[RMDB]
RNA sequence: GGGAACGACUCGAGUAGAGUCGAAAAAAGGUACUAUGUACUUUGUGCCUAGAGCUAAGUCUGUUGUCUCAAGGAUUGGAGACUCCAUCUUUACAGGCUGUACUGGCUCUUGGAACAAGGUCACUCAGUUGCUUUAACACUUCGGUGUUAAAGCAACAAAAGAAACAACAACAACAAC
Reactivity to 2A3 in 0.01 (KOAc 150mM, MgCl2 10mM, bicine 150mM(pH8.5), 24C), signal-to-noise 2, nucleotides 027 to 126: a000a000g050g000u060a070c060u070a080u180g030u020a000c000u020u010u020g000u010g030c000c010u020a000g010a000g000c010u080a110a000g010u000c020u020g100u080u060g050u040c020u010c070a070a050g120g000a120u140u220g090g010a120g050a040c060u040c010c030a090u040c030u040u090u040a000c000a010g030g000c000u020g020u070a070c090u040g000g000c010u000c000u000u020g010g000a010a000c000a000a000g020g030u010c040a010c030u070c020a020
Reactivity to DMS in 0.01 (KOAc 150mM, MgCl2 10mM, bicine 150mM(pH8.5), 24C), signal-to-noise 1, nucleotides 027 to 126: a040a040g000g010u010a140c110u000a060u010g010u000a010c000u000u010u000g000u010g000c000c000u000a010g010a040g000c050u000a080a010g000u000c060u000g010u000u000g010u010c080u000c140a090a120g010g010a120u020u010g050g010a110g040a200c110u010c030c010a050u000c050u000u000u000a080c140a040g010g000c020u010g000u010a090c140u040g000g000c000u000c020u000u000g000g000a010a040c030a000a020g000g010u000c140a110c070u010c090a130

The record gives the reactivity of an RNA of 177 nucleotides to 2A3 and DMS. The RNA was probed in 150 mM KOAc, 10 mM MgCl2 and 150 mM bicine (pH 8.5) at 24 C. For 2A3, 1,314 sequencing reads were counted. For 2A3 the reverse transcriptase was SuperScript II with manganese. Values cover nucleotides 27 to 126.